[RMDB]
RNA sequence: GGGAACGACUCGAGUAGAGUCGAAAAUCCUAAGUCAACUUCUGAACUCUAAGACAGUAAGGUGGUAUUAACUCGACAGGGAGACCGUCGGAAACGACGGUCGAAGAACUGUCGAGUUAAUACCACCUUAUCGAGAGUUCAUGAAGUUGAUAUGGAACAUGUAAGAUCUGUUCGCAGAUCUUACAUGAAAAGAAACAACAACAACAAC
Reactivity to DMS in 0.01 (KOAc 150mM, MgCl2 10mM, bicine 150mM(pH8.5), 24C), signal-to-noise 1, nucleotides 027 to 156: u010c000c010u000a100a300g000u000c000a050a000c000u020u000c000u000g000a010a030c020u000c000u030a280a270g030a160c300a050g030u000a000a020g030g090u000g000g000u000a010u000u000a000a040c000u010c000g020a050c000a070g020g000g040a300g040a020c000c000g000u010c010g010g030a210a130a300c010g010a010c040g030g050u000c000g020a050a150g000a110a120c000u000g010u030c000g030a010g010u000u010a000a030u010a010c000c010a010c010c010u000u000a000u000c000g000a030g010a010g000u000u000c000a030u000g030a030a010g000u000u000g000a010u000a080u000g010g000a070a200
Notes:
Chemical mapping of a 207-nucleotide RNA with DMS. Values cover nucleotides 27 to 156.